[RMDB]
RNA sequence: GGGAACGACUCGAGUAGAGUCGAAAAGUGGUGCGCGGAGAGGGUAACCACCGGCGCGCGUCACUGAUAUAUCCACCGGGGGGUAAGGGGAGAAAAGGAUACAGCGCGACGAAGUUCGCACGCUGCCGAAAUGUACCCACAUUCGUGUGGGUACAAACAUUUGCUUAAACUUCGGUUUAAGCAAAUGAAAAGAAACAACAACAACAAC
Reactivity to 2A3 in 0.01 (KOAc 150mM, MgCl2 10mM, bicine 150mM(pH8.5), 24C), signal-to-noise 2, nucleotides 027 to 156: g000u000g010g000u030g000c000g000c020g060g090a170g070a080g130g090g010u090a110a050c070c040a050c050c020g080g020c000g030c000g000c000g000u000c000a000c000u010g000a000u060a010u010a010u120c070c070a080c060c110g000g000g020g000g020g010u070a050a050g000g050g040g000a010g030a040a160a000a070g020g000a030u070a170c020a000g000c020g000c010g030a050c000g050a140a130g060u160u020c000g000c020a010c050g000c000u000g030c020c000g040a100a100a040u090g000u000a000c030c000c000a000c000a020u050u100c170g070u030g000u000g050g000g010u000a000c020a000a000a000
Reactivity to DMS in 0.01 (KOAc 150mM, MgCl2 10mM, bicine 150mM(pH8.5), 24C), signal-to-noise 2, nucleotides 027 to 156: g030u000g070g000u000g030c000g010c020g020g010a160g010a130g010g040g000u000a080a090c130c120a070c010c000g010g000c010g000c020g080c020g030u000c010a020c030u010g020a130u000a080u000a080u000c020c030a130c040c010g000g000g030g000g050g030u020a030a070g020g020g010g020a090g020a060a040a080a160g000g000a290u010a020c020a020g020c000g000c010g010a170c010g020a110a100g050u010u020c020g010c000a030c040g000c000u000g000c010c050g020a060a050a210u000g000u010a020c000c000c010a010c010a070u000u020c220g010u000g020u000g000g000g000u000a010c010a020a020a120